[RMDB]
The record gives the reactivity of an RNA of 207 nucleotides to 2A3.
RNA sequence: GGGAACGACUCGAGUAGAGUCGAAAAUGUAGAGACGGGUCUUGCUAUGUUGCCCAGGCUGGUCUUGAACUCCUAGGCUCAAGCAAUCUUCCUGCCUCUGCCUCCUAAAAUGCUGGGAUUACAGGUGGGAUUACAGAGCACCAUGGCACUCUGCCAAAUGGGAGUAUUACUUCGGUAAUACUCCCAUAAAAGAAACAACAACAACAAC
Reactivity to 2A3 in 0.01 (KOAc 150mM, MgCl2 10mM, bicine 150mM(pH8.5), 24C), signal-to-noise 3, nucleotides 027 to 156: u180g000u010a000g000a000g000a030c000g030g000g000u030c050u010u000g010c010u040a170u300g070u140u150g100c000c000c000a000g000g050c140u180g010g080u080c050u150u220g040a080a020c020u030c010c000u000a010g000g000c000u020c040a000a010g000c020a040a040u050c070u120u060c010c010u010g010c010c010u010c000u010g010c000c000u010c010c010u080a160a160a050a020u160g000c030u020g020g000g040a050u020u140a050c010a070g050g010u030g030g010g060a010u030u140a080c040a030g020a020g080c040a020c030c010a050u030g020g000c050a010c090u160c080u120g030c050c000a010a040
For 2A3, 1,400 sequencing reads were counted. The reactions ran in a buffer of 150 mM KOAc, 10 mM MgCl2 and 150 mM bicine (pH 8.5), at 24 C. 2A3 adducts were read by reverse transcription with SuperScript II with manganese. It was measured as part of the RMDB library OK3TST.